[RMDB]
RNA sequence: GGGAACGACUCGAGUAGAGUCGAAAAGAUAUGGACGUUCUUUUGACGAAAUGGGUCUCGGAAACGAGACCUAAUUUCGAUAAGAACAGUCCUAAGUCAAACGCGUGAUAGUUCGCUAUCACGCGAAGUGGUGGGUAAUGUUCGCAUUACCCACCACAAAAGAAACAACAACAACAAC
Reactivity to 2A3 in 0.01 (KOAc 150mM, MgCl2 10mM, bicine 150mM(pH8.5), 24C), signal-to-noise 1, nucleotides 027 to 126: g040a020u110a040u180g000g000a000c000g000u030u000c010u090u070u060u140g190a170c010g020a000a010a000u010g010g000g020u000c000u000c020g080g060a060a080a040c030g020a010g000a000c000c000u000a000a030u000u010u010c000g010a000u010a010a010g010a000a000c100a040g020u000c000c000u010a130a010g030u040c040a080a070a040c030g000c000g030u010g000a000u000a010g040u060u040c190g030c180u000a020u000c010a000c000g000c020g000a000a000
Reactivity to DMS in 0.01 (KOAc 150mM, MgCl2 10mM, bicine 150mM(pH8.5), 24C), signal-to-noise 2, nucleotides 027 to 126: g000a050u000a300u000g000g000a040c020g020u000u010c000u000u000u010u030g010a270c250g000a000a020a000u000g010g010g040u000c000u020c000g050g000a070a130a110c000g000a000g000a020c000c000u000a000a040u010u000u000c010g010a110u020a010a000g000a020a020c000a130g000u000c000c000u000a020a080g000u010c060a090a110a300c080g030c000g010u000g000a040u000a010g030u000u000c180g050c030u000a020u000c000a000c010g000c000g000a010a000

Record summary: This 177-nucleotide RNA was probed chemically with 2A3 and DMS. Reactivities are given for positions 27 through 126. The DMS profile rests on 1,231 reads. The RNA was probed in 150 mM KOAc, 10 mM MgCl2 and 150 mM bicine (pH 8.5) at 24 C. For 2A3 the reverse transcriptase was SuperScript II with manganese.